[RMDB]
RNA sequence: GGGAACGACUCGAGUAGAGUCGAAAAGAUAUGGAUAAAUCUGGAGCUCCUUGAUCGGAAACGAUCAGCGAGCGAUGAAAGAGUUUAUCCUAAGUCAAAGUACUGACAGGUUCGCCUGUCAGUACAACACCUGAAUUAGGUUCGCCUAAUUCAGGUGAAAAGAAACAACAACAACAAC
Reactivity to 2A3 in 0.01 (KOAc 150mM, MgCl2 10mM, bicine 150mM(pH8.5), 24C), signal-to-noise 3, nucleotides 027 to 126: g000a000u020a000u060g000g000a000u010a010a040a020u000c010u000g020g010a010g000c010u010c000c030u070u220g000a000u000c010g010g020a000a000a010c000g000a010u010c000a010g020c100g010a000g010c030g050a110u000g010a000a010a000g020a030g030u010u050u010a000u000c010c000u000a000a000g000u000c040a170a130a060g010u010a000c000u010g000a010c000a010g000g120u090u130c280g190c070c010u000g000u010c000a000g000u000a000c000a000a000
Reactivity to DMS in 0.01 (KOAc 150mM, MgCl2 10mM, bicine 150mM(pH8.5), 24C), signal-to-noise 4, nucleotides 027 to 126: g000a010u000a020u010g000g000a020u000a000a010a020u000c000u000g020g000a010g030c000u000c000c020u000u010g010a000u000c000g020g000a000a010a030c000g010a010u010c000a010g000c300g010a010g030c000g000a070u010g010a130a220a030g000a030g010u000u000u000a000u000c000c000u000a000a110g000u000c000a090a120a140g000u000a000c000u000g010a000c000a000g000g010u000u010c280g020c000c000u000g000u000c000a010g000u000a000c000a090a150